Chemical mapping of a 207-nucleotide RNA with DMS and 2A3. The RNA was probed in 150 mM KOAc, 10 mM MgCl2 and 150 mM bicine (pH 8.5) at 24 C. Source: RMDB library OK3TST, as collected in RNAgym. DMS (dimethyl sulfate) methylates the pairing face of unpaired adenines and cytosines. Reactivities are given for positions 27 through 156.

[RMDB]
RNA sequence: GGGAACGACUCGAGUAGAGUCGAAAACGAGGAUGCGGCCCGCGAUCUAGACGACCUUGCAGCAGCGGGUGCGCGUGCAGAGAAGGCCACUGACAAGCUUUCUAAGACUACUACUGAUUGGGCUGCUGAGCAGCAGAAGGCCAAUGCUCGCGCGAGCGAGUAUCCUUAGAUUCGUCUAAGGAUACUCAAAAGAAACAACAACAACAAC
Reactivity to DMS in 0.01 (KOAc 150mM, MgCl2 10mM, bicine 150mM(pH8.5), 24C), signal-to-noise 2, nucleotides 027 to 156: c070g000a190g020g010a100u000g020c010g000g010c000c010c010g040c030g000a100u010c060u000a170g020a170c110g010a090c060c030u000u000g040c060a160g040c050a260g020c040g000g030g000u000g000c040g040c000g040u000g000c020a080g020a110g000a010a090g030g010c000c020a180c060u000g000a090c100a120a090g020c010u000u010u010c020u000a100a090g000a110c060u000a110c060u000a150c050u000g010a160u000u000g000g000g000c030u000g030c040u000g010a050g050c020a130g020c020a030g000a090a070g010g010c020c010a190a100u010g010c000u000c020g000c020g000c040g000a070g030c100
Reactivity to 2A3 in 0.01 (KOAc 150mM, MgCl2 10mM, bicine 150mM(pH8.5), 24C), signal-to-noise 4, nucleotides 027 to 156: c040g020a080g100g010a030u050g030c080g040g010c010c010c000g000c010g010a060u030c040u080a060g070a130c060g060a080c050c050u090u180g020c100a090g020c010a000g010c040g010g010g000u060g000c000g000c010g000u010g000c020a020g040a010g030a300a030g030g000c000c010a040c030u030g010a080c040a090a050g010c010u030u060u020c030u070a070a070g050a110c040u070a030c020u040a030c050u190g060a130u090u060g010g000g010c000u040g020c040u060g040a040g080c010a000g010c010a010g050a190a090g040g010c010c000a040a030u020g000c000u000c020g000c000g000c010g020a020g050c050